[RMDB]
RNA sequence: GGGAACGACUCGAGUAGAGUCGAAAAUGUGUUGUUGAACCUGCCCAGUUGUGGGUGCAACCUUGUACCAGGCAGCCCGACCCUGACCUAAAGUAAAUUCCUAGGAGAACUGUUUUCCUGGGUUUUGUCAUCUUGCAUCUUUCGAGAUGCAAGAUGAAAAAGAAACAACAACAACAAC
Reactivity to DMS in 0.01 (KOAc 150mM, MgCl2 10mM, bicine 150mM(pH8.5), 24C), signal-to-noise 4, nucleotides 027 to 126: u040g010u000g010u000u000g010u010u000g000a050a040c060c010u010g010c020c010c060a100g020u010u030g020u000g000g000g010u020g000c040a030a040c040c050u010u000g030u010a070c050c040a100g000g000c070a120g000c050c010c040g000a080c040c010c010u020g000a090c070c060u030a060a070a120g030u040a050a030a040u020u000c000c000u000a010g000g010a030g020a020a260c280u060g010u030u010u000u000c000c010u000g000g000g010u010u000u000u000g020